[RMDB]
Description
Chemical mapping of a 177-nucleotide RNA with DMS and 2A3.
RNA sequence: GGGAACGACUCGAGUAGAGUCGAAAAUCACUAUGUUGGCCAGACUGGUCUUGAACUCCUCACCUCAAGUGAUCUGCCCACCUCAGCCUUGCAAAGUGCUGGGAUUACAGGUGUGAACCACUGUGCCUCAAUGAUUUGAAUUCGUUCAAAUCAUUGAAAAAGAAACAACAACAACAAC
Reactivity to DMS in 0.01 (KOAc 150mM, MgCl2 10mM, bicine 150mM(pH8.5), 24C), signal-to-noise 9, nucleotides 027 to 126: u000c030a060c050u000a090u010g020u000u000g010g020c040c050a090g000a100c130u000g010g010u000c040u000u010g010a080a130c070u000c040c020u000c060a100c050c020u000c090a060a050g010u000g010a030u000c050u000g010c020c010c020a110c130c010u000c020a020g010c010c010u000u010g020c240a070a070a050g010u010g020c010u000g010g000g000a080u000u000a060c120a040g010g010u000g010u000g010a080a100c050c010a040c030u000g010u000g010c070c060
Reactivity to 2A3 in 0.01 (KOAc 150mM, MgCl2 10mM, bicine 150mM(pH8.5), 24C), signal-to-noise 9, nucleotides 027 to 126: u020c000a000c040u090a110u220g120u110u100g080g000c020c010a030g060a180c130u090g020g010u020c020u020u120g080a080a040c020u050c020c010u010c020a030c010c010u030c040a030a030g010u000g020a030u010c010u090g020c000c000c000a030c010c010u000c010a000g010c000c010u090u190g120c120a200a110a020g040u120g070c010u010g010g000g000a010u030u130a040c040a030g000g020u020g020u030g070a020a020c030c000a010c020u040g030u100g060c000c010
The RNA was probed in 150 mM KOAc, 10 mM MgCl2 and 150 mM bicine (pH 8.5) at 24 C.
For DMS, 40,846 sequencing reads were counted.